[RMDB]
RNA sequence: GGGAACGACUCGAGUAGAGUCGAAAACGGGGUUGGAUCCGACUCUCAUAGGCUCUCCAACCCAACUCCUACUCAAUACGUCCUCGUCGUACAGAACGGUAACAUGUUUUCCGACCAUCCGCGCUUGCAAACCUGCCAAAGUUCGCUUUGGCAGGAACGAUGAAGACGUGUUCGCACGUCUUCAUCGAAAAGAAACAACAACAACAAC
Reactivity to 2A3 in 0.01 (KOAc 150mM, MgCl2 10mM, bicine 150mM(pH8.5), 24C), signal-to-noise 2, nucleotides 027 to 156: c080g000g000g000g000u040u030g060g020a150u300c010c040g090a110c100u080c030u020c130a180u190a210g020g000c000u000c000u000c010c000a000a000c000c000c000a000a000c000u000c000c010u040a020c010u020c030a040a090u090a120c030g030u000c050c020u050c050g060u040c020g010u070a020c010a070g070a100a050c030g000g070u060a030a030c030a070u090g030u040u030u050u110c060c050g010a060c040c010a060u030c030c030g030c020g000c060u030u030g010c040a070a030a110c000c000u000g000c000c000a020a000a010g020u010u050c110g020c160u000u000u000g000g000c000a000g000g010a000a000